[RMDB]
RNA sequence: GGGAACGACUCGAGUAGAGUCGAAAAAUGUCUCCUCAUAAAGAGAAGAGAAGGUAAAGUCAGCAAGCUCCUCCUUCUAUGAUUUCAUGGGAGAAAAAGCCAAGACAAAAAUGUAACACAUGUCCAAAGGAUAAAAAGGAGCUUCCAGGGAUAAGCACACCUAGGAUAAUUUCGAUUAUCCUAGGUGAAAAGAAACAACAACAACAAC
Reactivity to DMS in 0.01 (KOAc 150mM, MgCl2 10mM, bicine 150mM(pH8.5), 24C), signal-to-noise 1, nucleotides 027 to 156: a020u010g000u000c020u000c000c000u030c020a110u000a130a130a140g020a150g000a160a030g040a040g010a090a060g020g010u000a060a100a080g030u000c060a100g010c080a120a140g030c010u000c000c020u010c030c000u020u020c020u030a030u000g000a260u000u020u000c030a010u010g020g000g010a020g030a060a050a090a100a060g020c030c030a130a150g040a130c040a020a100a040a120a180u000g000u000a060a040c130a100c050a100u000g010u000c040c020a100a060a070g000g040a160u020a040a030a010a050a070g030g000a060g010c010u000u010c000c030a140g000g000g000a060u000a080a050g000c030a130
Reactivity to 2A3 in 0.01 (KOAc 150mM, MgCl2 10mM, bicine 150mM(pH8.5), 24C), signal-to-noise 2, nucleotides 027 to 156: a000u110g030u020c010u040c000c020u050c050a100u200a110a170a020g060a000g020a190a030g020a000g010a090a030g030g030u140a060a030a060g070u150c090a040g030c050a080a020g000c020u020c000c020u000c030c000u010u020c030u020a020u030g090a190u060u160u240c050a020u010g040g040g000a000g030a070a040a000a000a010g030c000c000a000a030g040a010c040a000a150a070a070a010u120g070u150a090a010c060a020c070a240u070g010u000c020c010a100a120a110g010g010a050u090a090a100a010a000a020g000g000a030g000c000u030u010c070c000a040g070g000g060a080u160a110a060g020c160a010

An RNA of 207 nucleotides, treated with DMS and 2A3 and read out base by base. The data come from the RNA Mapping Database (RMDB), library OK3TST. For DMS the reverse transcriptase was MarathonRT. The 2A3 profile rests on 946 reads. Reactivities are given for positions 27 through 156.